An RNA of 177 nucleotides, treated with 2A3 and DMS and read out base by base. For DMS, 2,272 sequencing reads were counted. For 2A3 the reverse transcriptase was SuperScript II with manganese.
RNA sequence: GGGAACGACUCGAGUAGAGUCGAAAAGACGCGAGAGACGCGAGACGCGCAAUGGCAGAAGCCGCAAUAGAUGAUACGAAGGAAGAGGCAAGACGGAGAGCGCGCAACUAUCUCGAAUAACCAAGAACACUAGUGAGUCCUUCGGGACUCACUAGUGAAAAGAAACAACAACAACAAC
Reactivity to 2A3 in 0.01 (KOAc 150mM, MgCl2 10mM, bicine 150mM(pH8.5), 24C), signal-to-noise 3, nucleotides 027 to 126: g120a020c030g000c050g080a030g050a020g010a050c000g060c020g020a090g010a040c000g040c000g010c000a000a050u100g040g000c000a020g040a090a030g010c110c000g010c040a040a100u180a150g100a080u150g070a040u070a280c060g020a140a000g190g040a010a060g070a000g030g010c090a070a040g040a020c030g080g000a000g000a000g000c050g000c000g040c040a000a000c030u050a030u080c000u010c010g030a140a030u050a050a030c040c010a010a060g040a180a000
Reactivity to DMS in 0.01 (KOAc 150mM, MgCl2 10mM, bicine 150mM(pH8.5), 24C), signal-to-noise 2, nucleotides 027 to 126: g000a130c200g000c000g020a100g030a040g010a170c160g010c020g010a120g030a110c110g070c000g030c040a060a040u010g020g060c030a110g000a240a050g000c060c010g000c140a110a120u020a060g030a160u010g010a100u040a050c060g010a090a070g000g000a100a160g000a080g000g030c040a000a110g000a140c120g000g000a030g000a280g020c040g030c000g030c070a050a080c050u050a140u020c030u000c030g000a050a030u010a010a160c060c010a030a080g000a080a120